Record summary:
Chemical mapping of a 170-nucleotide RNA with DMS and 2A3. For DMS, 34,002 sequencing reads were counted. The RNA was probed in 150 mM KOAc, 10 mM MgCl2 and 150 mM bicine (pH 8.5) at 24 C. For 2A3, 25,633 sequencing reads were counted.
[RMDB]
RNA sequence: GGGAACGACUCGAGUAGAGUCGAAAAGGACUCUCCGCCCAAGCCGAGAUGGGCCUCAGUUCCGAGCGAAGAGCCGAACCGGGAAGAGGAAGCGCCCGAGAGGGAGCCAAUGCCAAAGAGGUGGGGAAUGGAAACGUGUUCGCACGUUUCAAAAGAAACAACAACAACAAC
Reactivity to DMS in 0.01 (KOAc 150mM, MgCl2 10mM, bicine 150mM(pH8.5), 24C), signal-to-noise 9, nucleotides 027 to 129: g000g010a080c060u030c090u000c030c040g020c020c020c010a100a270g010c010c020g010a030g010a020u000g020g000g050c010c010u010c040a050g010u000u050c020c050g030a090g000c080g000a030a040g020a060g030c110c050g030a050a040c070c050g020g010g030a080a060g000a090g000g000a030a030g040c020g040c060c000c000g010a090g030a080g000g030g030a060g010c080c120a120a120u090g020c010c090a050a100a120g030a060g040g000u030g040g000g010g000a070a070u050g070
Reactivity to 2A3 in 0.01 (KOAc 150mM, MgCl2 10mM, bicine 150mM(pH8.5), 24C), signal-to-noise 8, nucleotides 027 to 129: g030g000a020c020u010c000u000c050c010g000c000c010c010a030a020g030c010c010g050a050g000a040u040g000g000g000c000c000u040c030a040g000u100u040c020c020g000a010g010c030g010a030a030g010a020g040c050c040g010a010a010c020c000g010g010g010a030a020g020a020g030g010a020a010g030c030g030c020c010c010g070a080g010a020g020g010g010a010g010c010c010a080a050u170g050c020c020a090a090a020g030a020g010g020u050g010g010g000g030a040a050u160g120